[RMDB]
RNA sequence: GGGAACGACUCGAGUAGAGUCGAAAAAAGAGCUAGGGAAACUGACUCAGUGCCCCCAAGUGUCCAAACGUUGAAACUUCAAUGGGAAGCUCAGAGGAAGGACUUCCGAAGGAUGAAGUGGGUGGCACAUGGAAAAGGGGGCCUGAAGGAGGAAAAGCAAUGUACCCUGAUUCGUCAGGGUACAUUGAAAAGAAACAACAACAACAAC
Reactivity to 2A3 in 0.01 (KOAc 150mM, MgCl2 10mM, bicine 150mM(pH8.5), 24C), signal-to-noise 2, nucleotides 027 to 156: a000a000g060a000g010c090u120a110g030g010g030a080a070a060c070u090g070a050c020u000c030a010g010u060g210c000c000c000c000c000a080a040g000u000g040u030c010c010a140a050a040c080g010u070u070g050a100a020a010c020u010u010c020a050a080u110g100g000g000a020a000g000c020u010c060a080g030a050g120g080a050a060g020g010a050c000u000u010c000c010g050a070a020g040g040a070u100g030a050a050g040u020g020g040g020u180g010g000c040a000c000a030u010g050g050a020a070a110a200g000g000g000g020g000c000c000u000g020a000a000g020g030a010g000g060a000a110a060a020g050
Reactivity to DMS in 0.01 (KOAc 150mM, MgCl2 10mM, bicine 150mM(pH8.5), 24C), signal-to-noise 1, nucleotides 027 to 156: a070a060g000a080g020c000u000a020g030g000g030a090a040a040c060u000g010a150c040u000c000a160g010u000g030c070c010c000c000c000a050a250g010u000g020u000c000c010a070a120a080c070g000u000u000g030a250a070a050c000u000u000c000a080a130u010g030g000g000a050a000g000c030u000c040a140g010a190g020g000a110a110g030g000a020c030u010u020c000c010g000a140a140g030g030a130u000g000a050a020g020u010g000g050g060u000g000g010c040a030c040a070u000g000g000a060a090a080a150g000g010g040g060g030c000c000u000g000a030a040g000g000a120g030g000a060a040a060a170g020
The record gives the reactivity of an RNA of 207 nucleotides to 2A3 and DMS. The data come from the RNA Mapping Database (RMDB), library OK3TST. The 2A3 profile rests on 1,302 reads.